[RMDB]
RNA sequence: GGGAACGACUCGAGUAGAGUCGAAAAGUUGAGAGCGUUUAACUUAAGUCUUUUUUAUUAGCUUAAAAAAACUAUAUACAAGUGGUGGUAGUCCGCCACUCUAAGGCGACGCCUUUAGAAGAAGAGGGAAAGGCACUAAGCUUCGGCUUAGUGCCAACAAUCUAUACACCUUCGGGUGUAUAGAUUGAAAAGAAACAACAACAACAAC
Reactivity to 2A3 in 0.01 (KOAc 150mM, MgCl2 10mM, bicine 150mM(pH8.5), 24C), signal-to-noise 2, nucleotides 027 to 156: g050u070u070g060a040g010a040g070c030g000u020u080u090a090a060c060u070u040a080a000g060u120c010u060u110u100u030u040u060a150u120u110a100g030c040u040u070a000a130a040a000a000a000a010c120u100a160u040a010u100a300c040a010a060g000u010g010g060u000g010g040u070a070g060u040c020c000g020c000c000a000c000u040c000u010a000a010g050g010c070g030a020c080g030c010c000u070u140u190a070g000a130a000g020a010a000g030a060g030g010g000a030a120a130g050g000c010a010c000u010a010a010g000c010u020u030c220g030g020c010u020u000a000g000u010g000c000c000a000a000
The record gives the reactivity of an RNA of 207 nucleotides to 2A3.
Values cover nucleotides 27 to 156.
Conditions: 150 mM KOAc, 10 mM MgCl2 and 150 mM bicine (pH 8.5), 24 C.
2A3 adducts were read by reverse transcription with SuperScript II with manganese.